[RMDB]
RNA sequence: GGGAACGACUCGAGUAGAGUCGAAAAACACCCAAUUUAGGAUCAACAUUUGGGCUUAUUUGAACUGCUGACAAACGAGGAAUACCAUCGCUGCCAUCCUCGGGCUCCUCGGCAAAUGCAUAUGGAGCAGUACGCUUACUUUCGAGUAAGCGUACUGAAAAGAAACAACAACAACAAC
Reactivity to DMS in 0.01 (KOAc 150mM, MgCl2 10mM, bicine 150mM(pH8.5), 24C), signal-to-noise 2, nucleotides 027 to 126: a100c250a100c010c000c010a110a080u000u000u010a090g000g010a050u020c100a090a080c090a060u000u020u010g010g000g010c020u000u010a090u010u000u010g000a050a110c070u000g000c020u020g000a120c200a010a090a100c070g000a010g020g020a110a070u000a120c130c060a070u000c110g010c030u000g030c040c040a070u000c020c010u000c040g060g000g000c010u000c040c030u000c090g000g010c020a020a080a070u000g010c070a070u000a100u000g000g030a140g020
Reactivity to 2A3 in 0.01 (KOAc 150mM, MgCl2 10mM, bicine 150mM(pH8.5), 24C), signal-to-noise 2, nucleotides 027 to 126: a000c040a090c000c000c000a010a000u170u090u130a160g000g020a100u080c030a030a090c030a110u050u070u100g040g000g000c010u060u080a040u180u140u020g030a070a010c040u040g010c020u070g050a040c040a070a140a020c030g000a030g040g030a050a090u120a160c040c030a040u120c090g040c120u020g000c000c020a060u010c050c000u020c000g050g030g000c000u000c000c000u050c020g030g020c060a130a230a050u190g010c030a030u040a040u160g040g020a040g000
Chemical mapping of a 177-nucleotide RNA with DMS and 2A3.
The DMS profile rests on 1,447 reads.
High 2A3 reactivity points to a flexible backbone, as in loops and unpaired stretches.
Values are in units of 0.01, from 0 to 300, in steps of 10.
It was measured as part of the RMDB library OK2TRN.